[RMDB]
RNA sequence: GGGAACGACUCGAGUAGAGUCGAAAAGGGAAUUUAAAGUAUUGCUAAAUUAACUCAGUAGGGCGGUUGGGGUUUUAAUACGUAUAUACAAUGUGCAGUCUUUGCUUAAAAAGAGAUUUUGUUUGAGGCAACAGAAUAGACAGGUGAAGGUAAUUAACGCCGAUUAAAUAUUCGUAUUUAAUCGGCGAAAAGAAACAACAACAACAAC
Reactivity to 2A3 in 0.01 (KOAc 150mM, MgCl2 10mM, bicine 150mM(pH8.5), 24C), signal-to-noise 1, nucleotides 027 to 156: g030g010g040a060a010u130u230u240a290a130a040g040u050a000u060u010g030c000u040a150a000a170u180u110a130a120c030u070c110a020g040u060a060g010g030g010c060g000g040u060u000g010g020g080g010u040u060u010u030a040a010u060a040c040g030u050a050u000a000u000a110c050a040a080u090g020u050g110c000a000g000u010c010u080u050u060g010c000u120u080a140a070a030a000a000g070a030g000a030u040u000u130u070g030u010u050u040g040a000g040g000c000a000a000c000a030g030a050a030u060a000g040a030c040a000g040g000u130g000a000a020g000g000u090a050a080u120u120a180a000
This 207-nucleotide RNA was probed chemically with 2A3.
The RNA was probed in 150 mM KOAc, 10 mM MgCl2 and 150 mM bicine (pH 8.5) at 24 C.
2A3 adducts were read by reverse transcription with SuperScript II with manganese.